[RMDB]
The data come from the RNA Mapping Database (RMDB), library OK3TST. This 207-nucleotide RNA was probed chemically with DMS and 2A3.
RNA sequence: GGGAACGACUCGAGUAGAGUCGAAAAGGAUGAUCUGGACCCGGCCAGUAAUCCGAAUUAGUACCGGGAUUGCAUCGUCGAGCCGUCAGGGGCGAAGACGAGAACCUGAAAGCACGAAGCACCGGGCGGUGCGCGUGCGAGAUAUAACGCCCAACAACAUUAUUAGCAUCUUCGGAUGCUAAUAAUGAAAAGAAACAACAACAACAAC
Reactivity to DMS in 0.01 (KOAc 150mM, MgCl2 10mM, bicine 150mM(pH8.5), 24C), signal-to-noise 2, nucleotides 027 to 156: g000g000a050u010g000a100u000c030u000g010g030a130c070c030c070g040g010c010c000a060g030u000a100a070u010c030c020g020a080a100u000u000a180g030u010a080c070c020g020g010g000a190u000u000g030c030a170u000c010g010u010c000g000a300g000c010c000g000u000c020a200g020g020g040g010c010g000a080a190g000a060c000g000a070g010a070a110c050c030u030g010a090a110a230g010c000a030c000g000a060a120g050c000a030c000c010g090g020g040c200g020g020u000g020c040g020c020g000u000g000c000g000a030g000a120u010a140u020a100a090c040g000c040c000c000a080a120c070a110a230
Reactivity to 2A3 in 0.01 (KOAc 150mM, MgCl2 10mM, bicine 150mM(pH8.5), 24C), signal-to-noise 3, nucleotides 027 to 156: g020g010a010u020g000a050u100c000u010g010g000a050c000c010c000g020g010c000c000a020g010u070a010a030u000c000c000g010a020a050u200u110a150g070u090a060c000c010g000g000g040a040u040u200g070c070a100u020c000g020u010c010g010a030g030c010c000g190u260c140a120g050g140g070g000c010g030a060a010g010a000c000g020a000g010a020a030c010c040u070g060a130a030a000g000c020a000c010g030a130a050g000c020a020c020c010g000g170g000c110g020g000u010g000c000g000c000g000u000g000c000g010a010g020a010u190a010u030a050a080c060g030c000c010c010a020a020c080a010a000

DMS adducts were read by reverse transcription with MarathonRT. For 2A3 the reverse transcriptase was SuperScript II with manganese.